[RMDB]
RNA sequence: GGGAACGACUCGAGUAGAGUCGAAAAUUGGCCGACGUGGUACAGGAUAGGCUGAUCCGCACCGAGACCAGCACCUAUUGCCCGUUCAAGGGUGAAGCCAGCUAUUACAGCGUGACUACCGACGCCGCCGCGGAGUACAGUUCGCUGUACUCCGCGGAAAAGAAACAACAACAACAAC
Reactivity to 2A3 in 0.01 (KOAc 150mM, MgCl2 10mM, bicine 150mM(pH8.5), 24C), signal-to-noise 3, nucleotides 027 to 126: u070u030g040g000c010c000g030a040c040g080u080g010g030u060a050c020a140g050g020a070u060a080g170g000c000u010g010a010u060c030c000g050c060a120c060c070g010a010g010a130c000c040a000g010c070a010c030c000u060a070u080u070g010c000c000c000g050u070u130c020a070a060g070g000g000u050g020a010a010g060c010c000a060g000c030u090a140u230u140a120c140a020g000c020g160u050g040a070c030u060a010c000c030g050a060c020g010c000c000g000
Reactivity to DMS in 0.01 (KOAc 150mM, MgCl2 10mM, bicine 150mM(pH8.5), 24C), signal-to-noise 1, nucleotides 027 to 126: u100u000g040g000c000c080g000a300c300g000u000g080g170u060a100c140a030g000g000a080u000a030g040g020c000u000g000a090u000c040c170g010c080a030c140c000g000a080g000a010c000c000a040g010c130a170c000c000u000a130u080u030g000c040c000c040g140u090u000c300a100a220g000g000g000u000g000a080a000g000c190c030a040g000c060u000a000u080u000a080c010a130g010c090g020u000g000a130c030u000a220c050c000g040a300c300g030c000c030g010
The data come from the RNA Mapping Database (RMDB), library OK1LIB. An RNA of 177 nucleotides, treated with 2A3 and DMS and read out base by base. For DMS, 778 sequencing reads were counted. 2A3 adducts were read by reverse transcription with SuperScript II with manganese. DMS adducts were read by reverse transcription with MarathonRT. The reactions ran in a buffer of 150 mM KOAc, 10 mM MgCl2 and 150 mM bicine (pH 8.5), at 24 C.